[RMDB]
RNA sequence: GGGAACGACUCGAGUAGAGUCGAAAAGAUAUGGACCCUAGACCCUUGGAUUUAUUCUUAUAUCGGAAACGAUAUAACUAUUGUCAGGGUUCUAGGGUCCUAAGUCAAAGGUUGCUUCGGCAACCAACAUUAAUGACAUGUUCGCAUGUCAUUAAUGAAAAGAAACAACAACAACAAC
Reactivity to 2A3 in 0.01 (KOAc 150mM, MgCl2 10mM, bicine 150mM(pH8.5), 24C), signal-to-noise 4, nucleotides 027 to 126: g020a000u050a050u120g000g010a010c000c000c000u000a000g000a010c000c010c040u060u120g150g010a060u300u300u160a050u160u060c010u010u020a010u000a000u010c000g030g000a070a030a040c000g000a000u000a000u000a010a010c010u020a020u050u040g050u050c020a010g010g010g000u030u020c000u000a000g010g010g010u000c000c000u000a000a000g010u010c000a000a010a040g000g000u000u000g000c010u050u080c200g110g000c000a000a000c000c000a000a000
Reactivity to DMS in 0.01 (KOAc 150mM, MgCl2 10mM, bicine 150mM(pH8.5), 24C), signal-to-noise 6, nucleotides 027 to 126: g010a050u000a300u010g000g010a020c000c000c000u000a010g010a030c020c000c000u000u000g010g010a020u010u010u000a010u000u000c070u000u000a010u000a000u000c000g000g010a150a080a220c010g010a010u000a000u000a010a010c040u000a010u000u000g000u000c010a010g010g000g000u000u000c000u000a010g000g010g010u000c000c000u010a000a080g000u000c040a080a100a140g010g010u000u000g010c000u000u010c200g020g000c010a010a010c000c010a050a060
Chemical mapping of a 177-nucleotide RNA with 2A3 and DMS. It was measured as part of the RMDB library TTRDEL. Reactivities are given for positions 27 through 126. For DMS the reverse transcriptase was MarathonRT.